[RMDB]
RNA sequence: GGGAACGACUCGAGUAGAGUCGAAAACGGGGAUUUCCAAGUUCUAAUGCGUCUCCGCGGCCUUCGGAGCCGUUCCACCCACCCGGGCGCGCAUGUGCGGAUUGAGCCACCACUCCGCCAGCAUGACGAUUAAUGGGCAGUUCGCUGCCCAUUAAUCAAAAGAAACAACAACAACAAC
Reactivity to 2A3 in 0.01 (KOAc 150mM, MgCl2 10mM, bicine 150mM(pH8.5), 24C), signal-to-noise 3, nucleotides 027 to 126: c030g000g000g070g010a060u150u050u080c110c030a090a040g100u140u080c080u190a160a050u200g020c030g030u000c010u000c000c020g000c010g020g000c010c000u020u040c060g060g000a020g010c010c000g000u020u000c030c020a070c020c020c000a040c020c010c000g000g010g000c030g000c010g010c030a030u080g030u110g050c010g000g010a020u020u070g040a030g040c030c020a030c010c010a020c060u000c000c010g000c000c000a010g050c020a020u080g060a040c120
Reactivity to DMS in 0.01 (KOAc 150mM, MgCl2 10mM, bicine 150mM(pH8.5), 24C), signal-to-noise 2, nucleotides 027 to 126: c030g010g000g000g000a110u000u000u030c030c010a140a060g010u000u070c100u000a040a090u010g000c160g030u000c010u010c020c070g050c030g000g030c010c040u000u000c040g000g000a030g020c040c010g040u020u000c030c050a170c080c000c040a050c000c030c010g000g010g000c000g000c010g020c060a010u000g030u020g010c010g020g000a060u010u050g000a120g040c010c030a070c070c000a130c080u030c030c030g030c000c090a080g030c010a060u020g000a100c160